An RNA of 177 nucleotides, treated with 2A3 and DMS and read out base by base. It was measured as part of the RMDB library M2PK90. For 2A3, 2,422 sequencing reads were counted.
RNA sequence: GGGAACGACUCGAGUAGAGUCGAAAAGCAUUGGGAAAGUUAAUCAAAAGUGCAUCAAAACUUUCCCUAUACGAAAUCAAAAUCGUUAUGAUGCACUUUUGACAUCGAUUAAGAUGAAUAGACACAAUUCCCAAUCAUUAUUCGUAAUGAUUGGGAAAAAAGAAACAACAACAACAAC
Reactivity to 2A3 in 0.01 (KOAc 150mM, MgCl2 10mM, bicine 150mM(pH8.5), 24C), signal-to-noise 2, nucleotides 027 to 126: g030c020a060u060u110g050g020g030a040a040a070g080u050u090a110a100u050c010a010a000a000a000g010u000g000c000a000u000c010a000a130a070a010c000u020u030u000c010c000c000u010a000u000a000c010g000a020a030a070u140c040a030a080a010a130u040c030g010u050u050a060u140g010a000u000g010c000a000c000u000u000u010u000g010a000c010a000u010c010g150a160u170u230a120a090g020a020u020g030a040a100u120a190g120a000c040a000c000a130a050
Reactivity to DMS in 0.01 (KOAc 150mM, MgCl2 10mM, bicine 150mM(pH8.5), 24C), signal-to-noise 6, nucleotides 027 to 126: g020c160a070u000u000g000g000g010a080a100a130g010u000u000a060a130u000c010a020a010a010a010g020u000g000c000a000u000c000a050a050a090a130c130u000u000u000c000c000c000u010a100u000a010c020g000a010a070a060u010c260a070a090a160a070u000c020g010u000u000a120u000g010a010u000g000c000a010c000u000u000u000u010g000a060c010a000u000c020g010a140u010u010a130a110g000a020u000g010a080a080u010a080g010a150c100a040c140a040a120